[RMDB]
RNA sequence: GGGAACGACUCGAGUAGAGUCGAAAAUCAAAGUUAGAGUAAACCACACUGAUGUAAGAUGCUUUUGACUAGGAUGCUAUUCAGGCACAGGGCCUCAACAGGCUAGAGUUGGGCUGGCCUAGAAGGGCACACGAUUGGUAUUCGUACCAAUCGUGUGAAAAGAAACAACAACAACAAC
Reactivity to DMS in 0.01 (KOAc 150mM, MgCl2 10mM, bicine 150mM(pH8.5), 24C), signal-to-noise 6, nucleotides 027 to 126: u010c040a060a100a100g010u000u010a030g010a100g010u000a050a090a100c120c060a060c070a100c110u000g020a070u010g010u000a070a080g010a100u000g010c040u000u000u000u010g020a050c050u000a080g000g010a080u010g020c020u010a090u000u000c080a050g000g000c020a070c120a080g000g000g000c040c010u010c060a040a080c100a040g010g000c060u010a050g000a080g020u010u000g020g010g000c020u000g010g000c010c010u000a070g010a070a070g000g000g010
Reactivity to 2A3 in 0.01 (KOAc 150mM, MgCl2 10mM, bicine 150mM(pH8.5), 24C), signal-to-noise 3, nucleotides 027 to 126: u020c030a050a030a030g060u070u110a020g040a030g070u070a030a140a100c020c010a010c010a030c060u140g060a100u120g130u080a040a030g040a050u070g000c010u050u080u100u180g050a020c020u010a060g050g040a060u050g020c000u060a060u080u090c060a030g010g000c000a000c020a180g160g000g000c010c010u160c010a030a010c000a020g120g000c020u080a040g050a000g120u130u050g060g000g000c030u020g000g050c020c000u030a030g010a030a000g010g000g000

Source: RMDB library OK2TRN, as collected in RNAgym. Structure probing data (DMS and 2A3) for a 177-nucleotide construct. The RNA was probed in 150 mM KOAc, 10 mM MgCl2 and 150 mM bicine (pH 8.5) at 24 C. 2A3 adducts were read by reverse transcription with SuperScript II with manganese. For 2A3, 3,151 sequencing reads were counted.